[RMDB]
RNA sequence: GGGAACGACUCGAGUAGAGUCGAAAAUGCUUAUACACCUCUGGACUAUAACUUCAAUGAUGCCGUUUCAUUAAUCCCACGGACUUCAGGUGCAUAUCCUUCUGUAUCAUAUGGCUCUGGUAACACGAGCUAUUGCCAUGUUCGCAUGGCAAUAGCUAAAAGAAACAACAACAACAAC
Reactivity to DMS in 0.01 (KOAc 150mM, MgCl2 10mM, bicine 150mM(pH8.5), 24C), signal-to-noise 1, nucleotides 027 to 126: u000g020c070u000u000a150u000a110c110a070c020c020u000c130u010g010g010a020c070u000a080u000a090a120c040u000u000c100a080a070u000g010a040u010g010c020c020g020u000u000u000c020a070u000u000a090a040u000c010c000c020a160c080g000g000a100c040u000u000c100a040g010g000u000g000c100a050u000a050u000c030c020u020u000c040u020g030u000a050u010c000a080u030a090u010g000g030c030u000c040u010g030g010u000a000a160c120a100c230g020
Reactivity to 2A3 in 0.01 (KOAc 150mM, MgCl2 10mM, bicine 150mM(pH8.5), 24C), signal-to-noise 1, nucleotides 027 to 126: u050g000c010u030u060a050u040a090c010a050c000c000u000c060u090g020g000a040c020u040a030u060a230a050c010u110u080c100a080a150u110g000a010u080g110c000c010g060u010u030u090c030a060u050u070a160a110u040c010c000c010a010c050g050g050a050c050u090u050c110a030g050g000u040g010c010a010u020a080u130c000c020u040u020c030u030g030u000a020u070c000a080u030a010u120g050g050c040u000c000u000g000g030u060a120a030c010a000c020g040